[RMDB]
RNA sequence: GGGAACGACUCGAGUAGAGUCGAAAAAGACAUGGCACUAGGAUCAUCUCAGUACGUACGAGCUAGCAUGGAUCGAUCGUACGUCACUAUACAUGCAUGUGAUCAUGAUCUGAUCCAUCAUGGUCGACUAAUUGUGACUAUUCGUAGUCACAAUUAGAAAAGAAACAACAACAACAAC
Reactivity to 2A3 in 0.01 (KOAc 150mM, MgCl2 10mM, bicine 150mM(pH8.5), 24C), signal-to-noise 9, nucleotides 027 to 126: a000g070a020c030a050u060g030g010c050a020c120u080a070g030g020a040u030c010a080u020c060u020c100a050g030u070a020c020g000u010a010c010g010a010g050c120u090a030g030c050a090u120g050g030a070u090c060g020a020u010c010g010u010a010c010g020u010c020a010c020u190a140u070a130c040a050u090g110c030a050u150g090u100g090a020u030c010a010u030g000a010u000c020u050g000a010u000c000c010a000u000c000a000u010g030g020u020c010g020a040
Reactivity to DMS in 0.01 (KOAc 150mM, MgCl2 10mM, bicine 150mM(pH8.5), 24C), signal-to-noise 9, nucleotides 027 to 126: a070g010a100c050a030u000g010g020c110a090c110u000a080g010g000a040u000c030a110u000c070u000c090a090g010u000a020c030g000u000a030c010g000a020g000c080u000a100g020c090a070u000g000g000a050u010c080g010a090u000c010g010u000a020c080g000u000c100a020c040u000a100u010a090c110a050u000g010c090a110u000g010u010g000a020u000c040a020u000g000a020u000c030u000g010a020u000c040c160a050u000c010a020u000g010g010u000c020g010a260